[RMDB]
RNA sequence: GGGAACGACUCGAGUAGAGUCGAAAACAAAAUCACGUGCUAGCUGUGAAGUGAAUUGGCGUUUGUAUAACUCAAGCUGCGGCACGAUUGUAUCUAAAUAAAUCAUGCGAUUCAUUGCAUCAGCAUUUGAUAGGUUUACAUUUUCAGUAAAGCCAAGGAAAAGACGUUAUUUCGAUAACGUCUUUUCAAAAGAAACAACAACAACAAC
Reactivity to 2A3 in 0.01 (KOAc 150mM, MgCl2 10mM, bicine 150mM(pH8.5), 24C), signal-to-noise 8, nucleotides 027 to 156: c030a000a070a010a060u060c030a020c060g020u020g000c010u050a180g000c020u040g040u060g110a150a060g030u030g060a070a080u060u070g120g020c040g010u050u100u080g070u030a150u050a110a030c030u020c040a050a040g010c050u080g020c120g040g000c010a000c030g010a010u000u090g030u020a060u020c130u150a020a090a130u110a020a090a010u110c040a020u080g010c020g030a030u050u040c020a030u050u220g030c010a020u020c040a040g000c010a030u050u030u050g060a070u070a060g020g000u010u010u030a030c020a070u070u110u080u290c060a030g010u050a030a040a050g040c010c040a010a040g110
Reactivity to DMS in 0.01 (KOAc 150mM, MgCl2 10mM, bicine 150mM(pH8.5), 24C), signal-to-noise 5, nucleotides 027 to 156: c040a090a080a130a060u000c030a060c040g020u010g010c010u000a120g040c050u000g040u010g020a080a100g020u010g020a040a080u000u000g030g010c020g020u000u000u000g010u000a130u000a080a130c140u000c030a040a080g020c000u010g040c100g030g030c010a040c040g010a040u000u010g000u000a190u010c110u010a090a070a150u010a060a040a070u000c020a050u000g010c020g010a300u000u000c040a070u000u000g000c020a060u000c050a070g030c010a130u000u000u000g010a100u010a100g020g000u000u010u000a050c030a120u000u000u000u010c130a140g010u000a020a040a090g020c010c020a060a190g000
The record gives the reactivity of an RNA of 207 nucleotides to 2A3 and DMS. 2A3 adducts were read by reverse transcription with SuperScript II with manganese. For 2A3, 7,734 sequencing reads were counted. The RNA was probed in 150 mM KOAc, 10 mM MgCl2 and 150 mM bicine (pH 8.5) at 24 C.